Annotation
Source: RMDB library TTRDES, as collected in RNAgym. This 177-nucleotide RNA was probed chemically with DMS and 2A3. DMS adducts were read by reverse transcription with MarathonRT.
RNA sequence: GGGAACGACUCGAGUAGAGUCGAAAAGAUAUGGAGCUUGCAUGGAGCCUGGUAUCGGAAACGAUACUAAGGCUAUGAAGUGUGGCUCCUAAGUCAAAAGGGUCAUAACCUUCGGGUUAUGACCCAACUCAGAUUAUAAGUUCGCUUAUAAUCUGAGAAAAGAAACAACAACAACAAC
Reactivity to DMS in 0.01 (KOAc 150mM, MgCl2 10mM, bicine 150mM(pH8.5), 24C), signal-to-noise 3, nucleotides 027 to 126: g000a010u000a010u010g000g000a030g010c010u000u010g020c000a020u000g010g000a010g000c000c000u000g000g010u010a000u010c000g010g000a010a010a010c000g010a010u000a010c010u000a010a020g050g020c010u000a100u010g010a160a270g000u000g010u000g010g020c010u010c000c000u000a010a060g000u000c010a090a110a180a180g010g010g010u000c000a010u000a000a010c000c000u000u010c270g020g010g000u000u000a000u000g000a010c000c000c010a000a010
Reactivity to 2A3 in 0.01 (KOAc 150mM, MgCl2 10mM, bicine 150mM(pH8.5), 24C), signal-to-noise 4, nucleotides 027 to 126: g000a000u010a010u040g000g000a000g000c050u110u090g000c120a010u020g000g010a010g000c000c000u000g020g010u010a000u010c010g000g000a000a000a000c010g000a000u020a010c020u060a150a080g020g000c000u040a300u020g000a000a010g010u010g000u020g030g000c000u000c000c000u000a000a000g010u000c010a000a020a050a210g010g000g000u010c000a000u000a000a000c010c010u070u130c300g060g000g000u000u000a000u000g000a010c000c000c000a000a000